[RMDB]
RNA sequence: GGGAACGACUCGAGUAGAGUCGAAAAGAGGGUUAGCGGUCAUGGUUAACCAAAUAGGGCAGGUUAUUGCAAAGAGACAUCCGUGUUUAUACCCAAAAUAAUCCGUAGCCAACACAUAAGCAACUUGCAAGUGAGUUCGUUUCGACGAACUCACUUGAAAAGAAACAACAACAACAAC
Reactivity to DMS in 0.01 (KOAc 150mM, MgCl2 10mM, bicine 150mM(pH8.5), 24C), signal-to-noise 1, nucleotides 027 to 126: g010a080g000g000g000u000u000a020g000c000g040g000u010c060a040u030g000g040u010u060a000a050c000c040a090a040a050u100a020g000g000g020c060a250g040g000u070u000a050u070u000g050c100a050a100a180g060a220g000a040c010a000u000c100c040g000u000g000u040u010u000a110u000a150c040c010c040a010a050a080a030u010a050a030u030c030c060g000u000a050g000c000c000a030a170c130a030c090a080u000a130a140g030c150a000a180c080u000u110g000
Reactivity to 2A3 in 0.01 (KOAc 150mM, MgCl2 10mM, bicine 150mM(pH8.5), 24C), signal-to-noise 1, nucleotides 027 to 126: g170a020g000g130g000u010u090a000g000c070g070g000u180c100a160u010g050g000u040u050a000a020c010c000a000a040a050u090a020g000g140g010c000a060g020g000u040u050a100u060u050g010c060a020a000a240g130a000g000a000c000a010u000c020c090g030u000g000u050u000u120a040u100a180c000c080c070a000a130a000a000u110a000a000u060c030c000g020u000a060g100c010c010a100a040c070a000c000a160u130a130a070g110c010a060a090c030u120u010g050